[RMDB]
RNA sequence: GGGAACGACUCGAGUAGAGUCGAAAACGCAUGCGUACUCGUGACGGUGCGGAUUCGUUGGUUUGGGUCUGUAAUGGUAGGCCCUGUCUGACGGGUCAGGGCUUGUUAAUGCAGGUCUGUGAGUGCGGGAGCAUGAAGGCUUCGGCUUUCAUGCUCCAAAAGAAACAACAACAACAAC
Reactivity to DMS in 0.01 (KOAc 150mM, MgCl2 10mM, bicine 150mM(pH8.5), 24C), signal-to-noise 4, nucleotides 027 to 126: c010g010c010a020u010g000c000g020u000a000c020u050c170g000u040g000a030c030g000g010u000g010c010g010g010a030u010u000c030g000u010u000g000g000u010u020u010g000g000g010u000c010u010g020u000a050a110u020g000g010u010a020g010g000c000c010c000u000g010u000c010u000g000a130c250g020g010g000u000c010a030g000g000g010c000u010u000g030u000u010a060a050u010g010c000a030g000g000u000c010u010g040u010g010a110g010u010g010c110g010
Reactivity to 2A3 in 0.01 (KOAc 150mM, MgCl2 10mM, bicine 150mM(pH8.5), 24C), signal-to-noise 3, nucleotides 027 to 126: c010g010c010a010u210g120c010g010u010a020c020u050c070g250u290g090a000c020g010g000u010g000c010g000g000a010u020u030c020g000u010u030g070g060u100u140u170g030g000g010u000c000u000g020u030a060a070u060g050g010u030a000g000g000c000c000c000u000g010u000c000u000g050a050c020g070g000g000u010c010a020g030g010g010c010u000u000g000u010u060a100a040u070g020c000a000g000g020u000c010u000g060u020g030a050g020u070g000c000g010